[RMDB]
Structure probing data (DMS and 2A3) for a 177-nucleotide construct. 2A3 is a SHAPE reagent: it acylates the 2'-hydroxyl of flexible nucleotides of all four kinds. For DMS, 1,768 sequencing reads were counted. DMS adducts were read by reverse transcription with MarathonRT. Conditions: 150 mM KOAc, 10 mM MgCl2 and 150 mM bicine (pH 8.5), 24 C.

RNA sequence: GGGAACGACUCGAGUAGAGUCGAAAAUCAAAGCAGCGAAGGGAUAGGCCAAGGACCAAAUAAAUAAGGCCAAACAGUCAAAUAAUAAAGACUGAGGUCCAAUAACCCGAAGCUGCAUCCCAAAAAAGAUAUUCUCAUAGUUCGCUAUGAGAAUAUCAAAAGAAACAACAACAACAAC
Reactivity to DMS in 0.01 (KOAc 150mM, MgCl2 10mM, bicine 150mM(pH8.5), 24C), signal-to-noise 2, nucleotides 027 to 126: u000c250a120a150a060g020c010a000g000c010g010a140a300g050g000g010a100u000a070g000g000c000c000a110a170g010g030a020c000c010a040a040a120u000a030a040a120u010a060a140g030g010c000c050a060a060a140c000a030g010u000c020a030a140a130u010a080a120u010a100a090a130g000a030c000u000g000a080g020g010u010c020c010a140a080u000a070a120c000c010c000g030a090a300g010c000u000g000c000a020u000c000c000c000a010a040a080a030a070a040
Reactivity to 2A3 in 0.01 (KOAc 150mM, MgCl2 10mM, bicine 150mM(pH8.5), 24C), signal-to-noise 1, nucleotides 027 to 126: u140c040a040a020a090g000c010a020g010c030g090a110a000g000g000g000a040u160a090g020g000c010c030a070a050g000g000a030c010c010a000a040a250u150a020a130a010u040a090a060g000g020c010c010a050a000a000c020a000g000u000c010a060a060a160u160a150a110u080a060a270a020g010a000c000u000g000a020g060g000u010c020c000a020a050u050a060a000c000c000c030g050a010a000g000c000u000g000c000a000u000c000c000c000a160a000a080a010a000a000